Structure probing data (2A3 and DMS) for a 177-nucleotide construct.
[RMDB]
RNA sequence: GGGAACGACUCGAGUAGAGUCGAAAACCGGCGCCUAGAGUGAACUGGUCUCGGAACUUAACCCUAAGUAUACACUGGUCACAUCCCAAGUCUUGCGCGCUUCGGCAGUCAAAUCUACCCUUCGCCUUACGGUUCAUGUAUUCGUACAUGAACCGUAAAAAGAAACAACAACAACAAC
Reactivity to 2A3 in 0.01 (KOAc 150mM, MgCl2 10mM, bicine 150mM(pH8.5), 24C), signal-to-noise 6, nucleotides 027 to 126: c020c000g030g010c020g010c000c000u070a040g020a040g170u080g050a100a040c020u030g030g020u040c020u020c070g040g050a090a050c010u050u060a090a060c000c000c040u030a090a010g040u040a060u020a080c070a030c020u020g040g000u060c020a030c010a090u050c010c000c000a070a020g040u010c010u040u100g010c060g000c000g000c000u050u060c010g030g020c020a030g020u080c040a050a040a080u020c020u050a070c000c000c000u030u080c040g020c010c000u010
Reactivity to DMS in 0.01 (KOAc 150mM, MgCl2 10mM, bicine 150mM(pH8.5), 24C), signal-to-noise 2, nucleotides 027 to 126: c020c010g000g040c090g040c000c020u020a050g000a190g030u070g010a100a160c030u050g000g000u070c020u030c000g000g000a090a030c070u070u030a120a080c090c040c080u010a050a030g010u020a170u020a080c080a020c010u030g020g010u000c000a070c030a160u000c000c030c020a090a050g030u000c030u030u010g000c070g030c050g000c040u000u030c000g020g000c070a030g010u030c070a070a130a080u050c080u000a080c060c020c020u000u030c040g000c080c010u010
The data come from the RNA Mapping Database (RMDB), libraries RFM100 and RFMREP. Reactivities are given for positions 27 through 126. The reactions ran in a buffer of 150 mM KOAc, 10 mM MgCl2 and 150 mM bicine (pH 8.5), at 24 C.